[RMDB]
This 177-nucleotide RNA was probed chemically with DMS and 2A3. Source: RMDB library RFM100, as collected in RNAgym. The 2A3 profile rests on 336 reads. For DMS the reverse transcriptase was MarathonRT. Conditions: 150 mM KOAc, 10 mM MgCl2 and 150 mM bicine (pH 8.5), 24 C. For DMS, 1,186 sequencing reads were counted.
RNA sequence: GGGAACGACUCGAGUAGAGUCGAAAAAUCAAUAUUAUCAUCCUCACUACAUUGGUAAAUAAGCGAAUAAAGUAUCGUAUCAUUUAUGGCCACUAUUUAAACAAGUUACGGGCGCUCAUUUAUUCGCAAUUGACUAACCCUUCGGGGUUAGUCAAUUAAAAGAAACAACAACAACAAC
Reactivity to DMS in 0.01 (KOAc 150mM, MgCl2 10mM, bicine 150mM(pH8.5), 24C), signal-to-noise 1, nucleotides 027 to 126: a050u050c070a040a100u000a030u020u010a070u000c080a080u010c030c030u000c070a050c190u050a100c030a110u020u000g050g000u030a070a070a060u090a040a160g020c020g000a000a000u000a030a000a030g000u010a030u010c040g020u020a070u000c010a050u020u000u000a050u020g020g010c000c020a050c130u020a050u000u040u000a080a100a110c140a010a080g010u020u000a020c140g000g000g040c120g020c120u030c120a090u020u000u000a000u000u010c050g020c000
Reactivity to 2A3 in 0.01 (KOAc 150mM, MgCl2 10mM, bicine 150mM(pH8.5), 24C), signal-to-noise 1, nucleotides 027 to 126: a000u120c070a060a040u120a190u210u000a020u070c050a000u020c040c020u190c050a150c050u070a040c000a190u000u230g100g090u140a080a060a130u040a140a020g010c020g020a010a000u000a050a030a040g020u050a120u050c040g000u060a010u130c000a180u070u160u060a090u070g010g000c010c000a060c070u000a060u170u200u090a080a060a010c020a040a040g060u070u070a020c270g020g020g020c300g000c000u010c080a060u070u070u110a000u080u000c000g000c010